[RMDB]
RNA sequence: GGGAACGACUCGAGUAGAGUCGAAAAAGUGAGUAUGGCUCGUUACGACGAGCCAUACUCACAACGGUUUUCCUAAAUCGUCGUGAGACGGACCUUGGAAAACCUAGUAUUUGAAUAACUAGGUCAAAUUAGCCUAGAUCCUUCGGGAUCUAGGCAAGUUGAUGGAAGACUUCGGUCUUCCAUCAACAAAAGAAACAACAACAACAAC
Reactivity to 2A3 in 0.01 (KOAc 150mM, MgCl2 10mM, bicine 150mM(pH8.5), 24C), signal-to-noise 1, nucleotides 027 to 156: a000g000u000g000a000g000u010a000u000g010g000c010u010c040g020u040u100a080c300g020a000c000g000a090g000c000c000a010u000a000c000u000c000a000c000a000a000c000g000g000u000u000u000u000c030c000u000a000a010a010u060c000g000u000c010g020u030g110a210g000a040c000g000g030a000c000c000u000u010g000g000a000a000a000a000c000c000u020a020g060u020a050u010u090u130g090a240a120u180a120a030c060u010a030g000g000u010c000a000a040a200u210u170a060g000c000c000u000a000g000a000u000c000c000u040u000c090g130g000g000a000u000c000u000a000g010g000c000a000a000